This 177-nucleotide RNA was probed chemically with DMS. The RNA was probed in 150 mM KOAc, 10 mM MgCl2 and 150 mM bicine (pH 8.5) at 24 C. Values cover nucleotides 27 to 126. For DMS, 1,168 sequencing reads were counted. Source: RMDB library OK2TST, as collected in RNAgym.

RNA sequence: GGGAACGACUCGAGUAGAGUCGAAAAUGUUGCUUUCCUCUCAGAUGUUCAGAUGGAAAUGGAUCCUCAAUCCUUGUUAGAAACUAUGGACACAAAUCCAGAAUCAGCAGAGAAUGUUCAACCGGCAGGAAGGUUCAAGAUUCGUCUUGAACCUUCCAAAAGAAACAACAACAACAAC
Reactivity to DMS in 0.01 (KOAc 150mM, MgCl2 10mM, bicine 150mM(pH8.5), 24C), signal-to-noise 2, nucleotides 027 to 126: u010g020u030u000g000c110u000u000u000c030c010u000c060u000c090a060g050a050u010g000u000u000c070a050g020a210u020g020g000a020a060a140u010g010g000a110u000c010c080u000c130a050a190u000c010c040u000u010g010u020u020a130g010a070a150a110c100u010a080u000g000g000a030c140a060c160a040a090a120u000c010c010a090g000a080a110u000c030a030g010c130a050g040a080g000a020a030u020g010u010u010c050a070a110c080c020g000g040c160a060